About this RNA: An RNA of 177 nucleotides, treated with 2A3 and DMS and read out base by base. It was measured as part of the RMDB libraries RFM100 and RFMREP. For DMS the reverse transcriptase was MarathonRT. The reactions ran in a buffer of 150 mM KOAc, 10 mM MgCl2 and 150 mM bicine (pH 8.5), at 24 C.
RNA sequence: GGGAACGACUCGAGUAGAGUCGAAAAACCGCCAUACUUAAUGAUUGGUAAUUCCUUACUAGUUAAUGAGUUUCAGACUUAAGUAUGAUGUUGUGUUUGCAUAUAGUUCGGGAAACCGAACUUGAGUAUAAAGCAUCAUGUUCGCAUGAUGCUUUAUAAAAGAAACAACAACAACAAC
Reactivity to 2A3 in 0.01 (KOAc 150mM, MgCl2 10mM, bicine 150mM(pH8.5), 24C), signal-to-noise 1, nucleotides 027 to 126: a000c000c000g140c050c000a010u000a010c010u010u000a010a040u120g120a150u110u100g050g030u150a000a000u000u000c000c000u000u000a010c030u120a130g160u220u040a010a000u020g000a010g020u000u000u060c050a060g000a010c000u000u000a000a000g000u040a020u020g130a080u120g000u000u000g030u000g000u000u160u080g010c090a010u000a000u040a260g000u000u000c000g000g000g000a060a060a060c000c000g000a000a000c000u000u000g040a000g000u010
Reactivity to DMS in 0.01 (KOAc 150mM, MgCl2 10mM, bicine 150mM(pH8.5), 24C), signal-to-noise 2, nucleotides 027 to 126: a190c000c020g020c230c010a000u000a010c000u000u000a010a010u030g010a180u020u000g000g000u040a000a000u000u000c000c050u000u000a020c010u020a170g010u020u000a000a020u000g000a040g020u000u000u020c030a010g020a190c070u000u000a000a010g000u010a000u000g010a160u020g010u020u000g000u010g010u000u000u010g000c060a050u020a050u020a020g000u000u000c010g000g000g000a090a120a120c000c000g000a000a000c010u000u000g000a110g020u000